An RNA of 207 nucleotides, treated with DMS and 2A3 and read out base by base. Conditions: 150 mM KOAc, 10 mM MgCl2 and 150 mM bicine (pH 8.5), 24 C. Source: RMDB library ARCHII, as collected in RNAgym. The DMS profile rests on 4,552 reads.

RNA sequence: GGGAACGACUCGAGUAGAGUCGAAAAUUUUUGCGAAGUCUGCCCAAAGCACGUAGUGUUUGAAGAUUUCGGUCCUAUGCAAUAUGAACCCAUGAACCAUGUCAGGUCCUGACGGAAGCAGCAUUAAGUGGAUCAUCAUAUGUGCCGUAGGGUAGCCGAUGUCUUAUCAGUUCGCUGAUAAGACAUCAAAAGAAACAACAACAACAAC
Reactivity to DMS in 0.01 (KOAc 150mM, MgCl2 10mM, bicine 150mM(pH8.5), 24C), signal-to-noise 3, nucleotides 027 to 156: u000u000u000u000u000g010c020g000a070a080g000u000c030u000g040c020c050c040a180a080a230g010c020a060c050g010u000a120g030u000g020u000u000u000g020a030a060g000a140u000u000u010c010g010g010u000c020c000u000a050u000g000c010a060a050u000a030u000g010a070a130c050c000c010a080u000g000a140a180c090c090a090u000g010u000c100a170g060g000u000c010c010u010g030a180c220g010g020a060a120g020c040a240g010c030a090u000u010a090a290g030u010g000g000a090u000c070a110u000c010a060u000a040u000g000u000g030c020c040g010u000a100g010g000g020u000a140g020c060c110
Reactivity to 2A3 in 0.01 (KOAc 150mM, MgCl2 10mM, bicine 150mM(pH8.5), 24C), signal-to-noise 5, nucleotides 027 to 156: u070u070u050u090u120g060c030g020a010a010g020u040c020u030g070c020c030c000a030a020a010g030c030a010c120g300u290a110g020u050g020u030u030u100g110a110a040g000a000u040u030u020c040g020g020u190c010c000u010a010u020g000c000a020a010u010a010u040g010a030a040c010c000c000a010u040g010a050a030c110c040a040u010g030u080c000a010g030g010u000c010c020u130g110a040c100g010g010a010a010g010c010a010g000c010a020u030u040a110a020g010u010g000g000a020u020c010a010u020c000a030u050a040u070g230u080g090c070c030g000u010a010g010g000g000u050a040g020c020c050
Background:
For DMS the reverse transcriptase was MarathonRT. Reactivities are rounded to 0.1 and cut off at 0 and 3. For 2A3 the reverse transcriptase was SuperScript II with manganese.